[RMDB]
RNA sequence: GGGAACGACUCGAGUAGAGUCGAAAAGAAGAGAAGUGAGUAAACGCCUAUGCGGUAUAAGCACAGCCCGUCAAAAGGCGUGCGGCGAGGGCACCAGACGCUGUGCUUAUAACUGGGCCUUCGAAGAAGGACGGCAUACGUUCGCGUAUGCCGUCCUAAAAGAAACAACAACAACAAC
Reactivity to 2A3 in 0.01 (KOAc 150mM, MgCl2 10mM, bicine 150mM(pH8.5), 24C), signal-to-noise 2, nucleotides 027 to 126: g100a000a020g130a010g060a130a070g040u100g070a020g020u220a050a070a060c030g030c020c000u080a090u280g030c020g000g000u040a040u010a060a000g000c000a000c000a000g030c000c140c010g020u050c010a020a040a080a110g170g020c050g010u010g000c000g060g010c090g030a060g000g080g000c080a160c020c000a020g010a000c000g000c020u000g000u030g040c000u070u000a030u040a040a000c010u010g000g010g040c000c000u010u040c020g100a080a040g090a040
Reactivity to DMS in 0.01 (KOAc 150mM, MgCl2 10mM, bicine 150mM(pH8.5), 24C), signal-to-noise 2, nucleotides 027 to 126: g000a180a050g000a070g000a010a100g000u000g030a030g070u000a030a100a020c050g000c000c010u000a070u010g000c020g020g020u040a000u010a010a010g040c000a000c010a000g030c190c040c100g010u050c270a090a070a080a150g000g000c140g020u010g000c100g000g000c090g020a060g030g060g090c000a110c020c000a060g000a120c190g010c000u000g010u000g010c000u000u000a040u010a100a100c050u000g030g030g000c040c070u000u000c010g000a080a090g000a070

About this RNA:
This 177-nucleotide RNA was probed chemically with 2A3 and DMS. Source: RMDB library OK1LIB, as collected in RNAgym. The 2A3 profile rests on 1,605 reads. DMS adducts were read by reverse transcription with MarathonRT. The RNA was probed in 150 mM KOAc, 10 mM MgCl2 and 150 mM bicine (pH 8.5) at 24 C. High 2A3 reactivity points to a flexible backbone, as in loops and unpaired stretches.